[RMDB]
RNA sequence: GGGAACGACUCGAGUAGAGUCGAAAACUCCCCGUUCCUGGAGAAGGGAGACUCGGGAACGCCUAGCAUCUGAGGGACGAAGCCGCCCCCGGGCGCUCCCCUCGGAGAUCCACUGGGUGGGUUCACAGAGAUACGUAUUGUUCGCAAUACGUAUCUCAAAAGAAACAACAACAACAAC
Reactivity to 2A3 in 0.01 (KOAc 150mM, MgCl2 10mM, bicine 150mM(pH8.5), 24C), signal-to-noise 1, nucleotides 027 to 126: c030u010c000c000c020c000g020u000u000c010c000u050g120g030a050g010a050a080g100g030g010a070g020a020c010u020c040g030g000g030a020a020c000g000c000c010u030a050g070c000a130u020c010u020g020a030g020g000g000a030c030g080a070a020g040c110c030g020c050c050c000c030c070g090g000g010c010g010c000u010c000c000c000c000u000c000g000g010a000g010a030u070c020c010a000c040u050g060g040g040u070g020g060g020u060u080c070a090c040a100
Reactivity to DMS in 0.01 (KOAc 150mM, MgCl2 10mM, bicine 150mM(pH8.5), 24C), signal-to-noise 2, nucleotides 027 to 126: c260u000c000c000c010c020g030u000u010c000c000u020g030g020a050g000a110a060g000g000g020a100g010a160c070u010c090g000g010g000a090a050c040g000c020c030u000a030g000c120a100u000c010u000g010a050g000g000g020a230c080g020a110a260g020c070c070g000c010c000c030c110c190g000g000g000c040g010c050u000c070c000c000c000u010c000g040g000a060g010a100u010c110c190a110c050u000g010g020g000u000g000g030g030u000u000c020a080c140a210

An RNA of 177 nucleotides, treated with 2A3 and DMS and read out base by base. The RNA was probed in 150 mM KOAc, 10 mM MgCl2 and 150 mM bicine (pH 8.5) at 24 C. For 2A3, 1,899 sequencing reads were counted. Source: RMDB library 15KREP, as collected in RNAgym. For DMS the reverse transcriptase was MarathonRT.